[RMDB]
Structure probing data (2A3 and DMS) for a 177-nucleotide construct.
Values are in units of 0.01, from 0 to 300, in steps of 10.
RNA sequence: GGGAACGACUCGAGUAGAGUCGAAAACAAGUCUCAGACUUGCUUGUUAAAUUACUGCGUGGAAUGCCGAUUCCAGAUUUUGAUUUAGACGAUUUUAUUGACGCACCAUGCUAUUGCUUUAACGCUGCAGAUGCAGCAAGUUCGCUUGCUGCAUCUGAAAAGAAACAACAACAACAAC
Reactivity to 2A3 in 0.01 (KOAc 150mM, MgCl2 10mM, bicine 150mM(pH8.5), 24C), signal-to-noise 3, nucleotides 027 to 126: c000a030a000g020u000c060u060c160a070g010a050c010u030u050g030c010u050u100g040u030u050a010a000a060u080u070a070c050u030g030c030g010u000g000g040a160a130u070g030c060c000g010a010u080u030c050c010a030g030a080u020u110u100u130g060a060u080u040u150a120g040a130c030g000a030u030u010u050u100a140u040u100g010a030c000g020c010a010c010c000a020u050g030c040u070a070u100u060g000c020u060u030u020a040a000c050g010c050u040g000
Reactivity to DMS in 0.01 (KOAc 150mM, MgCl2 10mM, bicine 150mM(pH8.5), 24C), signal-to-noise 3, nucleotides 027 to 126: c020a000a040g000u000c010u010c190a160g000a040c010u000u000g010c060u000u020g010u000u000a030a060a040u000u010a050c100u000g010c050g010u000g010g020a090a070u010g010c050c050g000a140u000u000c130c100a090g000a070u000u000u020u010g020a120u010u000u020a140g010a130c140g000a040u000u000u000u000a090u030u010g010a180c300g010c050a050c030c000a020u000g000c020u010a080u000u000g010c160u000u000u010a040a050c080g000c100u010g010
DMS adducts were read by reverse transcription with MarathonRT. The data come from the RNA Mapping Database (RMDB), library 15KREP. The RNA was probed in 150 mM KOAc, 10 mM MgCl2 and 150 mM bicine (pH 8.5) at 24 C.